RNA sequence: GGGAACGACUCGAGUAGAGUCGAAAAGAUAUGGACUUCUUUGAUCAGGGAGCGAUGAAAUCGGAAACGAUGGAGCUCAGCCUGGGAGAAGUCCUAAGUCAAAUCUCAACCCUUCGGGGUUGAGAAACGAAUCUACGUAGUUCGCUACGUAGAUUCGAAAAGAAACAACAACAACAAC
Reactivity to 2A3 in 0.01 (KOAc 150mM, MgCl2 10mM, bicine 150mM(pH8.5), 24C), signal-to-noise 2, nucleotides 027 to 126: g010a020u070a070u140g000g010a000c000u020u020c010u110u210u120g140a180u250c010a010g000g070g020a010g030c040g190a300u080g020a050a020a000u020c010g000g010a060a050a060c030g010a010u020g000g030a010g030c020u000c040a040g200c000c010u010g000g020g000a000g000a000a000g000u020c010c000u010a070a010g000u010c030a200a060a070u000c000u000c000a010a010c010c000c050u030u140c300g120g000g000g000u030u010g000a010g000a000a000a010
Reactivity to DMS in 0.01 (KOAc 150mM, MgCl2 10mM, bicine 150mM(pH8.5), 24C), signal-to-noise 2, nucleotides 027 to 126: g000a040u010a300u000g010g010a010c000u010u000c000u000u030u010g000a120u010c000a020g000g020g010a010g000c000g000a090u010g000a060a070a030u000c000g010g000a100a150a180c000g000a000u000g010g000a090g010c000u000c010a050g000c020c010u000g000g000g000a010g000a000a000g020u000c000c000u010a010a090g010u000c020a050a120a120u000c000u000c000a010a010c000c000c000u000u030c200g050g010g000g010u000u000g010a000g000a000a010a130
This 177-nucleotide RNA was probed chemically with 2A3 and DMS. Values cover nucleotides 27 to 126. DMS adducts were read by reverse transcription with MarathonRT. The DMS profile rests on 2,763 reads. The 2A3 profile rests on 4,558 reads.